[RMDB]
RNA sequence: GGGAACGACUCGAGUAGAGUCGAAAAUUACCCGGCUUCGGCCGGGUAAACAGCAGAGCCGUCGCGUAGGAUGCCGGCUACUCAAGGGUUGAUCCCACGCGAGAAACGGGUCGUUCGCGACCCGUAAUCAGUGUGUGUUAUUCGUAACACACACUGAAAAAGAAACAACAACAACAAC
Reactivity to 2A3 in 0.01 (KOAc 150mM, MgCl2 10mM, bicine 150mM(pH8.5), 24C), signal-to-noise 1, nucleotides 027 to 126: u010u000a000c010c000c010g020g020c030u070u080c230g160g000c000c000g000g000g000u010a000a010a000c020a000g100c020a000g040a040g200c020c030g080u090c050g010c040g060u050a050g040g090a020u040g000c010c020g070g010c020u060a110c030u050c060a080a150g050g000g000u050u020g050a050u020c010c010c000a020c010g070c050g050a080g080a070a200a010c000g010g000g020u000c010g020u020u030c050g000c000g020a000c000c000c000g000u000a000a010
Reactivity to DMS in 0.01 (KOAc 150mM, MgCl2 10mM, bicine 150mM(pH8.5), 24C), signal-to-noise 3, nucleotides 027 to 126: u000u000a010c000c000c000g040g000c010u010u020c190g050g010c010c000g000g010g020u000a000a000a010c100a080g010c080a100g020a130g010c050c000g000u000c070g010c050g020u010a080g010g000a090u010g000c050c000g010g000c030u000a020c040u000c030a110a170g000g010g000u000u010g000a080u000c000c000c000a060c140g000c130g000a090g010a050a110a020c000g010g000g020u000c000g020u000u010c180g030c010g010a010c010c000c000g000u000a010a050
An RNA of 177 nucleotides, treated with 2A3 and DMS and read out base by base. Reactivities are given for positions 27 through 126.